RNA sequence: GGGAACGACUCGAGUAGAGUCGAAAACAGGUAAGUAAGGUGAGAGAAGAUGCUGGCUUUGAUAGGUGGUAGCAUGGUGCCAUCUUGAAGGUACACUUGUCAGGACAGAAUGAUUUAUUGGAUGUGGGAGUGAAGGAGAGGAAGAGGAAGGAGUCCAAGAAAUGGUUAGGUUCGCCUAACCAUUUCUAAAAGAAACAACAACAACAAC
Reactivity to 2A3 in 0.01 (KOAc 150mM, MgCl2 10mM, bicine 150mM(pH8.5), 24C), signal-to-noise 2, nucleotides 027 to 156: c030a000g080g030u150a050a040g000u030a060a020g040g010u030g060a080g010a020g010a100a050g030a050u120g070c020u020g000g040c070u070u050u130g090a090u060a040g010g000u030g000g050u020a060g110c050a080u100g050g010u010g020c000c030a050u070c000u030u100g040a040a010g010g010u040a030c040a030c100u080u080g070u090c070a010g050g060a020c030a030g090a000a130u120g120a060u020u050u140a070u110u140g090g000a080u080g030u110g130g000g020a010g010u040g010a000a040g040g000a010g020a020g000g040a040a010g050a020g000g000a020a010g020g010a010g000u000c040c010a010